[RMDB]
This 177-nucleotide RNA was probed chemically with DMS and 2A3. The data come from the RNA Mapping Database (RMDB), library 15KREP. Reactivities are given for positions 27 through 126. For DMS the reverse transcriptase was MarathonRT. Values are in units of 0.01, from 0 to 300, in steps of 10. The reactions ran in a buffer of 150 mM KOAc, 10 mM MgCl2 and 150 mM bicine (pH 8.5), at 24 C.

RNA sequence: GGGAACGACUCGAGUAGAGUCGAAAACCAAGAGACGGACGACUUUCCCCUAUUGGUUGGGAAAAGUCCCGGAACCAGGAAAUGGGAAAGAGACGGUAGAAAAGAGCGAGCCUCCCAGUUUUCGAGUCAUAUAGAAUGGGUUCGCCCAUUCUAUAUGAAAAGAAACAACAACAACAAC
Reactivity to DMS in 0.01 (KOAc 150mM, MgCl2 10mM, bicine 150mM(pH8.5), 24C), signal-to-noise 2, nucleotides 027 to 126: c010c010a220a140g010a170g010a120c040g010g010a080c100g010a110c030u010u000u000c000c000c010c110u010a140u020u010g020g020u010u000g000g010g010a040a040a060a060g030u000c010c040c020g010g010a110a070c030c040a070g000g010a060a030a050u010g010g010g020a030a010a020g000a190g020a040c040g010g000u010a070g010a060a050a070a100g010a060g000c030g010a040g000c060c030u010c000c000c020a130g020u000u000u000u000c020g000a150g010u000
Reactivity to 2A3 in 0.01 (KOAc 150mM, MgCl2 10mM, bicine 150mM(pH8.5), 24C), signal-to-noise 2, nucleotides 027 to 126: c020c000a010a030g090a010g020a070c030g040g000a030c030g060a050c080u030u000u010c010c000c000c000u030a090u170u110g140g020u060u080g030g000g010a010a100a030a020g070u000c000c000c000g000g010a000a030c000c010a020g060g030a000a090a060u100g010g000g060a050a080a000g070a030g020a040c010g000g100u070a040g120a060a130a030a010g050a000g020c010g000a000g000c020c020u000c000c010c000a010g050u040u030u010u050c010g020a030g030u000